RNA sequence: GGGAACGACUCGAGUAGAGUCGAAAAGCACGAACGCUUGAAGGCUGCUCGCCUGAGUUCGUGGGUAGCUGCUUGAGGCGGCCAGUGAUGGUUUCGUCCAGAUGGAUGAUCGCCGCUGAUCUCCGCUCAAUACGACCUUUUUCGAAAGGUCGUAUUGAAAAGAAACAACAACAACAAC
Reactivity to 2A3 in 0.01 (KOAc 150mM, MgCl2 10mM, bicine 150mM(pH8.5), 24C), signal-to-noise 9, nucleotides 027 to 126: g060c000a000c020g030a050a010c020g030c100u110u120g060a040a010g030g000c020u110g100c080u160c140g010c010c010u070g020a050g020u050u040c010g000u020g000g010g010u030a010g010c030u070g010c020u050u090g060a030g080g000c000g000g030c020c000a030g010u040g050a120u180g010g000u040u050u070c020g000u000c010c010a110g050a300u300g120g010a010u030g000a010u030c020g020c030c010g000c040u010g020a040u010c030u000c010c020g020c020u010
Reactivity to DMS in 0.01 (KOAc 150mM, MgCl2 10mM, bicine 150mM(pH8.5), 24C), signal-to-noise 7, nucleotides 027 to 126: g000c010a020c000g000a000a020c020g020c210u020u030g020a120a060g020g000c010u010g010c200u030c190g000c010c000u000g000a110g010u000u000c020g030u000g010g010g000u020a090g020c020u000g010c070u000u020g000a100g000g010c000g000g020c200c010a040g000u020g000a110u010g000g000u010u010u010c030g010u010c000c010a280g010a130u030g020g010a030u010g000a020u010c050g000c030c030g000c020u000g010a130u000c070u000c010c030g000c180u000